[RMDB]
RNA sequence: GGGAACGACUCGAGUAGAGUCGAAAAGAUAUGGACAUGACACAGACAUGAAGGAGGGUCGGAAACGACCUGACUUCAACAGCUGUGCAUGUCCUAAGUCAAACACCUCUCGUUCGCGAGAGGUGAACUCACCUAAUUUGUUCGCAAAUUAGGUGAGAAAAGAAACAACAACAACAAC
Reactivity to DMS in 0.01 (KOAc 150mM, MgCl2 10mM, bicine 150mM(pH8.5), 24C), signal-to-noise 5, nucleotides 027 to 126: g010a020u000a250u000g000g000a000c010a000u010g010a300c000a000c000a000g010a050c100a300u010g000a040a010g010g010a300g010g000g020u010c010g010g000a040a090a120c010g020a000c000c010u010g000a200c000u000u010c000a020a050c140a160g000c010u000g000u000g000c010a000u000g010u000c000c000u010a000a040g000u000c020a220a150a270c020a000c000c000u000c000u000c010g000u000u000c250g030c010g000a010g000a020g010g040u000g000a010a070
Reactivity to 2A3 in 0.01 (KOAc 150mM, MgCl2 10mM, bicine 150mM(pH8.5), 24C), signal-to-noise 3, nucleotides 027 to 126: g010a000u060a020u090g000g000a000c000a010u040g150a160c000a000c000a000g040a050c150a300u300g010a010a000g020g000a030g010g020g010u000c000g000g000a030a040a010c000g000a000c000c010u010g010a020c000u000u000c000a070a040c070a030g020c000u010g000u000g020c000a000u010g000u010c010c000u000a000a000g010u000c010a020a080a100c010a000c010c000u000c000u000c020g070u100u100c300g010c010g140a000g000a010g000g000u000g000a000a000